[RMDB]
RNA sequence: GGGAACGACUCGAGUAGAGUCGAAAAAAUUUUUUCGGUCUCGACAGACAAAUCAGUGACAUGAUGGUCAUAGCGAAAGCACACGCACGAAAUGUCACUGAUGAAAAAGUGCGUGUGACCAAUUUAAGUGAAAGACUCUAUUCGUAGAGUCUUUCACAAAAGAAACAACAACAACAAC
Reactivity to DMS in 0.01 (KOAc 150mM, MgCl2 10mM, bicine 150mM(pH8.5), 24C), signal-to-noise 2, nucleotides 027 to 126: a050a040u010u000u000u010u000u000c060g020g050u010c000u000c150g020a100c180a050g010a020c090a110a160a000u010c000a000g000u000g000a010c000a040u000g020a150u010g010g000u000c030a060u000a070g000c030g000a140a070a090g000c000a190c130a020c020g010c000a020c090g000a050a080a000u000g000u000c000a010c010u000g020a030u000g010a020a000a030a080a020g000u000g000c000g010u000g000u000g000a060c000c000a060a100u010u000u020a040a160
Reactivity to 2A3 in 0.01 (KOAc 150mM, MgCl2 10mM, bicine 150mM(pH8.5), 24C), signal-to-noise 1, nucleotides 027 to 126: a000a000u150u070u010u010u010u030c040g020g000u030c000u000c050g160a050c040a080g000a010c040a010a080a000u020c000a000g000u010g000a000c010a050u190g030a120u060g160g030u040c040a150u260a070g020c020g060a090a010a000g020c010a010c010a000c020g000c000a010c020g110a000a090a260u020g010u000c010a000c000u000g000a000u010g000a000a000a000a000a050g010u010g010c000g000u000g040u000g000a000c000c000a030a030u190u160u110a190a030